[RMDB]
RNA sequence: GGGAACGACUCGAGUAGAGUCGAAAACACGGUCAUGAGAAAGCCGGACAUUGGGUCGUGACCAGCUUGGCUUAGCAGCUGUCAUGGUGUUCGGCGAUUUUGGUGAUAGUGAAUUGAGCUAAGCUGGGUCGAUAUCUUGGUUCGCCAGGGUAUUGACAAAAGAAACAACAACAACAAC
Reactivity to DMS in 0.01 (KOAc 150mM, MgCl2 10mM, bicine 150mM(pH8.5), 24C), signal-to-noise 9, nucleotides 027 to 126: c030a070c030g000g010u000c020a060u010g010a080g010a070a090a210g010c000c000g000g010a010c030a120u030u020g010g020g010u010c020g010u010g000a140c070c050a020g000c010u010u000g000g000c000u000u000a030g020c130a150g000c010u000g000u010c010a020u010g010g010u010g010u000u000c000g000g000c010g000a020u010u010u010u020g010g030u000g000a010u010a060g010u010g000a100a230u030u020g000a070g010c010u000a000a010g000c000u010g000g010
Reactivity to 2A3 in 0.01 (KOAc 150mM, MgCl2 10mM, bicine 150mM(pH8.5), 24C), signal-to-noise 9, nucleotides 027 to 126: c020a000c010g030g010u030c020a040u080g030a020g070a120a060a010g020c000c000g000g000a010c010a050u090u190g160g020g010u070c010g010u010g020a030c010c010a000g000c000u020u020g040g000c000u030u050a020g010c020a000g000c010u000g000u000c000a010u040g060g000u040g020u040u020c000g000g000c030g020a020u010u020u020u090g080g000u010g010a010u010a010g020u030g050a050a080u120u150g010a010g000c000u000a000a000g000c000u020g070g010